[RMDB]
RNA sequence: GGGAACGACUCGAGUAGAGUCGAAAAGAUAUGGAUUACAUGCGACAUGACGUUUAUCGGAAACGAUAAUCGUCAACAGCGCAGUAAUCCUAAGUCAAACUUCCACCGAGUUCGCUCGGUGGAAGAACGUAACACAACGGUUCGCCGUUGUGUUACGAAAAGAAACAACAACAACAAC
Reactivity to DMS in 0.01 (KOAc 150mM, MgCl2 10mM, bicine 150mM(pH8.5), 24C), signal-to-noise 3, nucleotides 027 to 126: g010a020u000a040u010g000g000a010u000u000a010c010a080u010g010c000g030a170c170a170u020g010a010c000g000u000u000u000a000u000c010g020g010a010a000a030c000g020a040u000a000a020u000c000g010u010c000a060a120c300a160g020c000g000c000a020g010u000a000a000u000c000c000u000a010a060g000u000c020a160a090a230c010u000u000c000c000a020c000c000g010a020g010u000u020c300g010c000u000c000g010g010u000g000g000a000a000g010a030a090
Reactivity to 2A3 in 0.01 (KOAc 150mM, MgCl2 10mM, bicine 150mM(pH8.5), 24C), signal-to-noise 3, nucleotides 027 to 126: g000a000u030a010u050g020g000a010u040u050a050c260a300u150g020c020g050a100c260a300u300g010a010c010g020u000u000u030a000u020c000g000g020a010a000a000c000g010a010u010a010a000u010c000g000u030c010a020a010c080a020g000c000g000c010a000g000u000a000a000u000c010c000u000a020a000g000u010c040a090a060a130c000u010u000c000c010a000c010c020g020a010g040u150u170c300g160c130u000c000g010g000u000g010g000a000a000g000a000a000
Overview
This 177-nucleotide RNA was probed chemically with DMS and 2A3. DMS adducts were read by reverse transcription with MarathonRT. 2A3 adducts were read by reverse transcription with SuperScript II with manganese. The RNA was probed in 150 mM KOAc, 10 mM MgCl2 and 150 mM bicine (pH 8.5) at 24 C. DMS (dimethyl sulfate) methylates the pairing face of unpaired adenines and cytosines. Reactivities are given for positions 27 through 126. For DMS, 4,100 sequencing reads were counted.